[RMDB]
RNA sequence: GGGAACGACUCGAGUAGAGUCGAAAAUGGACUAAACAAGCCCAACCGCCAAACCCUGGUUUCACAUGGGUCAGUCCCACAGCUCUUCAGCCAAAUGCCCAUUCGCAAAAUGUAAGUAUUCAGGCAGCAUGUUAAAUUUCACUUCUAUCCAUGUGUACCGUCCCACCGAUUUCGAUCGGUGGGACGGAAAAGAAACAACAACAACAAC
Reactivity to 2A3 in 0.01 (KOAc 150mM, MgCl2 10mM, bicine 150mM(pH8.5), 24C), signal-to-noise 1, nucleotides 027 to 156: u120g090g030a010c020u140a120a140a000c060a070a020g000c040c000c090a020a020c060c020g050c040c030a080a020a110c060c000c030u080g010g200u050u170u090c170a110c020a090u040g000g000g060u010c080a000g060u030c090c060c000a030c020a110g040c000u100c000u210u130c000a000g000c000c010a000a010a040u030g000c000c170c000a130u150u000c160g000c120a080a030a000a030u060g000u070a040a110g010u050a090u000u100c050a020g040g050c010a030g040c000a070u110g050u060u050a000a240a180u160u190u050c060a070c040u060u070c000u110a050u070c010c010a010u010g010u030g020u030a030
This 207-nucleotide RNA was probed chemically with 2A3. The reactions ran in a buffer of 150 mM KOAc, 10 mM MgCl2 and 150 mM bicine (pH 8.5), at 24 C. As a SHAPE reagent, 2A3 marks flexible, mostly unpaired nucleotides at the ribose 2'-OH.